[RMDB]
RNA sequence: GGGAACGACUCGAGUAGAGUCGAAAAGCCACUACGCAGAUUAAAAUAUGCUCAUAAACUGCUUAUUCUGAGAACUUUUGGUGGUCCAGCGUGGUUUAUGUCAGGUGGUAUUGCCUUGGAUCCGUGACCGAAGUUUAAAGUUCGCUUUAAACUUCGGAAAAGAAACAACAACAACAAC
Reactivity to DMS in 0.01 (KOAc 150mM, MgCl2 10mM, bicine 150mM(pH8.5), 24C), signal-to-noise 2, nucleotides 027 to 126: g010c030c020a030c040u010a110c140g030c000a040g020a120u000u010a010a100a090a120u010a080u010g020c020u010c030a050u010a030a050a050c010u020g010c010u010u010a110u010u010c040u010g000a160g020a130a070c090u010u000u000u010g040g050u000g020g020u000c030c010a050g020c300g040u010g020g000u000u000u010a030u020g000u000c140a100g010g050u000g000g030u000a050u000u010g010c040c020u000u000g010g000a140u000c000c080g010u000g030a210
Reactivity to 2A3 in 0.01 (KOAc 150mM, MgCl2 10mM, bicine 150mM(pH8.5), 24C), signal-to-noise 2, nucleotides 027 to 126: g010c020c000a010c030u050a020c050g010c050a010g040a190u210u220a050a040a020a100u180a060u150g020c000u050c010a080u110a020a030a000c010u020g010c040u140u110a140u230u030c010u070g130a080g080a300a130c030u130u150u200u240g170g010u100g000g000u000c020c020a010g030c030g010u050g020g010u000u100u000a050u070g090u130c080a040g040g050u000g000g000u090a130u020u160g060c000c000u020u080g010g000a030u050c060c020g000u060g030a060